About this RNA
This 177-nucleotide RNA was probed chemically with DMS and 2A3. For 2A3 the reverse transcriptase was SuperScript II with manganese. For 2A3, 3,504 sequencing reads were counted. For DMS, 4,528 sequencing reads were counted.
[RMDB]
RNA sequence: GGGAACGACUCGAGUAGAGUCGAAAAGCGCGCUGGCGUUCAACCAGCCCGAGAUGGUGUUGCCCACGUUGGCGACACCCGAUCCCAGCGCGCCGGUAUUGAGGUAGCCCGACAGGCCGGCACCGGAACGUAAGCAACUGUUCGCAGUUGCUUACGUAAAAGAAACAACAACAACAAC
Reactivity to DMS in 0.01 (KOAc 150mM, MgCl2 10mM, bicine 150mM(pH8.5), 24C), signal-to-noise 3, nucleotides 027 to 126: g000c060g030c180g010c030u010g000g000c090g030u000u000c180a170a250c060c090a060g010c020c010c040g030a060g000a110u040g020g000u000g000u000u000g010c000c000c020a080c270g000u040u070g000g000c000g010a020c000a010c010c000c150g000a090u040c060c000c000a040g000c000g010c060g000c000c010g000g000u000a060u020u030g000a170g000g000u010a040g010c100c010c000g000a230c110a080g000g000c020c020g010g010c040a060c050c040g000g020a140
Reactivity to 2A3 in 0.01 (KOAc 150mM, MgCl2 10mM, bicine 150mM(pH8.5), 24C), signal-to-noise 5, nucleotides 027 to 126: g050c020g000c000g000c010u020g020g030c100g150u150u140c030a100a080c030c050a040g070c000c000c000g120a150g020a080u170g000g020u000g000u000u000g000c010c000c000a300c170g060u170u290g000g010c000g000a000c000a010c000c000c000g030a010u030c000c000c000a010g000c030g000c010g000c000c010g070g020u120a120u100u190g030a080g040g040u060a030g010c010c010c010g040a050c020a010g110g010c020c010g000g030c010a030c050c000g020g060a070
For DMS the reverse transcriptase was MarathonRT.